This 207-nucleotide RNA was probed chemically with DMS and 2A3. It was measured as part of the RMDB library OK3TST. Conditions: 150 mM KOAc, 10 mM MgCl2 and 150 mM bicine (pH 8.5), 24 C. For DMS, 5,002 sequencing reads were counted. For 2A3 the reverse transcriptase was SuperScript II with manganese.
RNA sequence: GGGAACGACUCGAGUAGAGUCGAAAAGUCGCAGCUUCAGACGACACUCACGUUUGAGGAUACGACAACGGUAUGACGGUAUGACAACAUGACAGCAUGACAGACGCGCUCACAGAUGCGAUCCGUCGCAUCAAGGAUCUCCAGCAGGAUGUUGAGCUAACCUAUCAAACUUCGGUUUGAUAGGUUAAAAAGAAACAACAACAACAAC
Reactivity to DMS in 0.01 (KOAc 150mM, MgCl2 10mM, bicine 150mM(pH8.5), 24C), signal-to-noise 3, nucleotides 027 to 156: g010u000c000g000c010a040g000c030u000u000c010a030g040a030c000g020a200c100a150c250u000c080a200c030g000u010u000u000g010a050g030g000a050u000a030c040g000a040c020a100a140c000g020g030u000a090u000g020a080c070g010g000u000a100u000g010a100c030a080a090c070a080u000g000a140c040a110g030c010a130u000g010a130c020a130g020a090c030g020c040g010c010u000c040a150c100a150g010a030u000g000c020g010a030u000c110c270g000u000c000g040c010a010u000c010a090a080g020g010a060u000c000u000c020c000a070g010c040a090g020g010a070u000g030u000u020g010a120g020c080
Reactivity to 2A3 in 0.01 (KOAc 150mM, MgCl2 10mM, bicine 150mM(pH8.5), 24C), signal-to-noise 3, nucleotides 027 to 156: g020u010c010g000c050a000g010c010u020u000c000a010g000a030c010g070a030c070a070c110u080c020a070c010g000u000u010u000g030a040g000g030a050u030a110c010g000a020c040a080a040c050g050g010u130a100u140g050a020c070g000g030u050a120u160g040a080c060a110a030c030a100u060g050a010c010a020g140c030a060u090g030a020c040a050g080a020c040g020c020g000c050u000c010a060c020a020g010a010u020g010c020g000a010u060c050c190g050u010c000g000c010a020u020c010a020a040g110g000a060u020c020u020c040c040a030g000c010a000g090g040a030u070g000u070u030g000a010g000c020